Conditions: 150 mM KOAc, 10 mM MgCl2 and 150 mM bicine (pH 8.5), 24 C. Structure probing data (DMS and 2A3) for a 177-nucleotide construct. Reactivities are given for positions 27 through 126. For 2A3 the reverse transcriptase was SuperScript II with manganese. The 2A3 profile rests on 1,337 reads.
[RMDB]
RNA sequence: GGGAACGACUCGAGUAGAGUCGAAAACCGUAUCGGUUCGCCGAUACGGAAAAGUUAAUGCUGCUAACACACAUCUUUAGCAUGGCGGUGGUAUCGCUGGUGGGACUCCCCAGUUCGCUGGGGAGAAGGCCUAUGUAGAGUUCGCUCUACAUAGGCCAAAAGAAACAACAACAACAAC
Reactivity to DMS in 0.01 (KOAc 150mM, MgCl2 10mM, bicine 150mM(pH8.5), 24C), signal-to-noise 1, nucleotides 027 to 126: c000c000g000u030a000u000c000g000g010u000u030c240g000c000c000g040a010u000a000c010g000g010a010a030a030a090g010u010u000a080a040u000g050c030u050g010c030u000a040a040c120a090c100a060c130a080u000c030u000u000u000a050g000c040a040u000g000g010c060g010g000u000g000g020u000a020u000c060g010c000u000g050g010u000g010g010g000a230c000u000c000c000c000c010a020g010u000u020c150g030c010u000g010g000g000g000a000g000a000a030
Reactivity to 2A3 in 0.01 (KOAc 150mM, MgCl2 10mM, bicine 150mM(pH8.5), 24C), signal-to-noise 1, nucleotides 027 to 126: c010c000g000u020a020u020c010g000g090u090u040c220g030c070c010g020a000u000a000c000g000g000a060a070a000a000g020u050u120a060a040u080g030c020u030g000c040u130a180a000c040a000c000a010c010a150u040c050u070u100u070a020g050c020a020u050g020g010c080g030g030u100g040g060u060a050u100c040g000c030u030g030g040u090g030g050g050a050c010u020c000c000c000c000a010g010u060u090c160g020c070u000g000g000g000g000a000g010a000a000